[RMDB]
RNA sequence: GGGAACGACUCGAGUAGAGUCGAAAAUGCUGAAAAAGUUGCGCAAUAUUUAACGCAACAAGGCAUUAAUGCCUGUGCCUAUCAUGCCGGUUUUGAUAGUGAUACUCGCAGUCAGAUUCAGCAAGAUUUUAUGGCGGGUAAAAUUCAAGUGAUUGUCGUGAAGUGAUGUAUUCGUACAUCACUUCACAAAAGAAACAACAACAACAAC
Reactivity to DMS in 0.01 (KOAc 150mM, MgCl2 10mM, bicine 150mM(pH8.5), 24C), signal-to-noise 3, nucleotides 027 to 156: u010g010c020u010g000a070a060a120a140a190g020u000u000g020c000g040c030a060a230u010a180u020u000u000a110a050c020g020c000a020a020c020a070a110g010g000c020a110u000u000a040a090u010g010c000c010u010g010u000g010c000c000u000a050u000c010a080u000g010c080c090g030g040u000u000u000u000g000a050u000a050g000u000g030a180u000a040c070u000c020g040c020a160g010u000c040a130g030a210u000u000c020a070g010c030a100a150g000a090u000u000u000u000a060u020g020g050c060g000g020g030u000a020a040a050a120u000u000c080a030a180g020u010g000a140u000u000g010u000c080
Reactivity to 2A3 in 0.01 (KOAc 150mM, MgCl2 10mM, bicine 150mM(pH8.5), 24C), signal-to-noise 5, nucleotides 027 to 156: u020g000c000u020g070a050a020a040a060a080g000u000u010g000c020g010c050a070a030u060a140u220u270u160a170a020c010g000c000a000a010c020a040a040g020g000c010a010u050u100a090a090u120g030c010c000u040g030u100g050c010c000u000a020u060c010a020u050g050c060c040g120g000u040u080u060u050g040a030u020a040g050u070g050a030u050a080c030u050c060g000c020a010g030u030c010a000g020a100u100u060c010a020g020c030a050a070g030a070u030u090u090u080a050u150g050g000c000g000g000g020u020a040a050a050a070u160u110c090a100a000g060u030g150a230u080u090g050u110c040